The record gives the reactivity of an RNA of 177 nucleotides to DMS and 2A3. For DMS the reverse transcriptase was MarathonRT. The reactions ran in a buffer of 150 mM KOAc, 10 mM MgCl2 and 150 mM bicine (pH 8.5), at 24 C. Values cover nucleotides 27 to 126. The data come from the RNA Mapping Database (RMDB), library M2PK50.
[RMDB]
RNA sequence: GGGAACGACUCGAGUAGAGUCGAAAACUCGAACGGUUCGCCGUUCGAGAAAAGCGCGUCAGCGCUACGAUGCAAGCGCAAGCGCGUCCAUCGUAAAUGAAAAAACUUGUGUGUUCGCACACAAGAAGGUAUUCAGUUACUUCGGUAACUGAAUACCAAAAGAAACAACAACAACAAC
Reactivity to DMS in 0.01 (KOAc 150mM, MgCl2 10mM, bicine 150mM(pH8.5), 24C), signal-to-noise 2, nucleotides 027 to 126: c000u000c000g020a000a000c000g010g000u000u000c280g030c000c000g020u000u000c010g040a020g000a000a020a060a200g000c000g000c000g030u010c140a270g030c000g020c020u000a020c030g030a110u010g010c190a140a050g030c010g020c040a160a190g000c020g010c010g000u000c050c050a060u010c160g000u000a050a120a030u010g000a010a050a050a180a070a050c000u010u000g010u020g020u000g010u000u040c260g000c010a000c000a000c000a010a000g000a070a040
Reactivity to 2A3 in 0.01 (KOAc 150mM, MgCl2 10mM, bicine 150mM(pH8.5), 24C), signal-to-noise 4, nucleotides 027 to 126: c000u000c010g010a000a000c000g040g030u050u070c200g020c070c000g010u010u010c000g000a000g000a010a040a010a000g000c000g000c000g080u120c070a050g000c010g000c020u010a020c020g130a120u150g050c150a050a030g020c000g000c020a080a080g050c030g000c000g010u040c010c010a110u110c030g090u100a060a130a140u210g110a110a070a030a010a000a030c010u010u000g010u000g000u000g010u030u070c220g050c070a000c000a000c000a000a000g010a010a020